[RMDB]
RNA sequence: GGGAACGACUCGAGUAGAGUCGAAAAUCUUUACCUGGGACAAGCUUUGUAACUAUCCAUGCUAAACCUGCUACAAAUGGUAAUUGAAUCAAAGUAUUUGUUAUGUUGAAGAUACCAUGUGAUACUGCAUCUAAGAGCCAUUCGUGGCUCUUAGAUGAAAAGAAACAACAACAACAAC
Reactivity to 2A3 in 0.01 (KOAc 150mM, MgCl2 10mM, bicine 150mM(pH8.5), 24C), signal-to-noise 4, nucleotides 027 to 126: u010c010u020u000u020a040c010c010u060g000g270g000a010c030a010a010g010c010u090u030u060g040u070a110a090c060u020a010u130c000c010a020u020g030c010u070a100a160a190c010c100u090g020c060u120a080c090a100a120a080u030g010g060u140a100a100u060u110g060a060a060u080c010a000a070a000g030u030a290u050u050u010g020u040u050a050u090g050u010u010g020a000a010g000a050u020a060c020c020a100u090g020u000g080a040u090a150c000u010g020
Reactivity to DMS in 0.01 (KOAc 150mM, MgCl2 10mM, bicine 150mM(pH8.5), 24C), signal-to-noise 2, nucleotides 027 to 126: u000c010u000u010u010a060c020c030u040g010g060g020a020c010a050a050g000c010u000u010u000g000u000a120a030c070u040a110u010c000c010a030u000g000c050u050a090a120a090c060c010u000g010c030u000a020c130a100a050a030u010g000g000u000a070a120u040u000g000a110a080u000c040a040a000a050g000u000a030u040u000u000g000u010u020a060u010g000u000u000g040a000a030g020a060u000a180c050c010a040u040g000u020g000a070u010a060c040u010g000